[RMDB]
RNA sequence: GGGAACGACUCGAGUAGAGUCGAAAACUUAGCCAUCCGAGUGGACGUUGUCCUCCUUCGGAUGCCCAGGUCGGACCGCGAGGAGGUGGAGAUGCCAUGCCGACCCGAAGAGGAAAGAAGGACGCGACAUAAUAUGGCAGUUCGCUGCCAUAUUAUGAAAAGAAACAACAACAACAAC
Reactivity to DMS in 0.01 (KOAc 150mM, MgCl2 10mM, bicine 150mM(pH8.5), 24C), signal-to-noise 5, nucleotides 027 to 126: c060u000u000a080g020c140c010a020u000c000c000g010a030g010u000g000g000a030c060g020u010u020g010u000c020c020u000c050c070u010u000c020g000g000a020u000g000c090c030c020a120g000g000u000c040g000g000a150c050c090g010c110g000a080g020g010a100g010g020u010g010g010a090g010a090u000g010c030c040a090u000g010c020c010g010a070c020c020c030g000a060a050g010a080g010g000a050a060a060g010a060a060g000g000a030c060g020c090g010a220
Reactivity to 2A3 in 0.01 (KOAc 150mM, MgCl2 10mM, bicine 150mM(pH8.5), 24C), signal-to-noise 4, nucleotides 027 to 126: c020u080u120a010g120c020c010a010u000c000c000g030a040g130u040g000g020a040c130g250u150u260g020u080c010c000u000c020c040u050u030c010g000g000a000u010g000c010c000c000a030g000g010u030c000g020g060a070c040c010g030c040g050a080g040g050a040g010g080u060g030g030a130g020a070u140g040c010c020a040u110g010c000c020g030a050c000c020c000g070a070a040g050a040g040g050a130a060a020g070a040a030g040g010a010c040g000c020g050a010